[RMDB]
RNA sequence: GGGAACGACUCGAGUAGAGUCGAAAAGCGUGGCGGAGGCCAAAAUUCGCGCUUUGAUGGCAGAAUUACACGCACUUCGGUCGAGUGCAUCAACAUCAGGCACGGAGGUCACCAACCCAACUGAGACUACAUCCCGUGAGUUUGAGCGACAGCGGAGUAGUAAUGCUUUCUUCGGAAAGCAUUACUAAAAAGAAACAACAACAACAAC
Reactivity to DMS in 0.01 (KOAc 150mM, MgCl2 10mM, bicine 150mM(pH8.5), 24C), signal-to-noise 2, nucleotides 027 to 156: g030c060g010u000g010g010c080g030g010a240g000g050c060c060a020a020a080a200u010u010c000g020c010g010c000u010u000u010g020a070u000g000g040c120a140g010a140a120u000u000a150c090a060c070g010c010a030c010u010u010c090g030g040u000c150g010a070g000u000g000c010a100u000c020a070a070c020a060u000c020a050g010g000c000a010c000g000g020a020g010g000u000c000a000c070c000a050a030c050c010c010a060a120c060u010g000a100g000a110c020u010a080c070a300u000c020c000c010g010u010g000a080g000u010u010u000g010a160g000c020g010a070c030a040g000c050g010g000a100g010
Reactivity to 2A3 in 0.01 (KOAc 150mM, MgCl2 10mM, bicine 150mM(pH8.5), 24C), signal-to-noise 6, nucleotides 027 to 156: g050c050g030u050g030g000c050g020g060a030g060g000c010c000a070a090a020a060u080u050c040g000c010g000c020u210u130u170g050a060u050g010g030c110a040g070a100a090u220u160a140c090a030c130g010c000a010c010u090u110c100g130g070u100c130g030a010g010u010g020c020a040u070c040a040a090c000a020u030c030a010g020g010c010a010c050g030g010a050g040g000u030c030a000c060c030a020a060c020c000c000a020a040c060u090g020a030g040a080c050u060a040c080a120u090c030c010c010g010u020g020a100g010u040u100u110g050a060g020c040g020a030c020a030g010c020g030g010a040g020